[RMDB]
RNA sequence: GGGAACGACUCGAGUAGAGUCGAAAAGAUAUGGAGGAUUCAGAACUACAGACCCUGGUCGGAAACGACCAAGGUCUGCUGACGGUCCUCCUAAGUCAAAACUCAGGUCGGUUCGCCGACCUGAGAACUAAACAUGGAUGUUCGCAUCCAUGUUUAGAAAAGAAACAACAACAACAAC
Reactivity to DMS in 0.01 (KOAc 150mM, MgCl2 10mM, bicine 150mM(pH8.5), 24C), signal-to-noise 5, nucleotides 027 to 126: g010a030u000a300u010g010g020a040g010g010a030u010u010c050a080g000a110a100c060u020a150c030a010g000a010c000c000c020u000g030g000u000c000g010g000a130a100a180c010g010a020c010c000a000a000g010g010u000c000u000g010c010u000g000a300c300g000g000u000c000c000u000c000c000u000a010a080g000u000c030a110a080a110a170c010u000c000a010g000g000u000c000g020g000u000u010c300g020c010c000g010a010c000c000u000g000a000g010a010a150
Reactivity to 2A3 in 0.01 (KOAc 150mM, MgCl2 10mM, bicine 150mM(pH8.5), 24C), signal-to-noise 4, nucleotides 027 to 126: g010a010u060a030u140g000g000a000g040g020a010u300u300c070a070g070a240a120c170u300a130c260a050g000a010c000c020c000u000g000g020u010c000g020g040a060a050a040c010g000a000c000c020a010a000g000g010u000c000u000g010c000u010g030a060c100g060g020u010c000c010u000c010c000u000a020a020g000u000c010a030a070a030a100c000u000c010a000g030g000u000c000g020g090u060u100c300g010c130c000g000a020c000c000u000g000a000g000a010a000

Structure probing data (DMS and 2A3) for a 177-nucleotide construct. Conditions: 150 mM KOAc, 10 mM MgCl2 and 150 mM bicine (pH 8.5), 24 C. Source: RMDB library TTRDES, as collected in RNAgym. High 2A3 reactivity points to a flexible backbone, as in loops and unpaired stretches.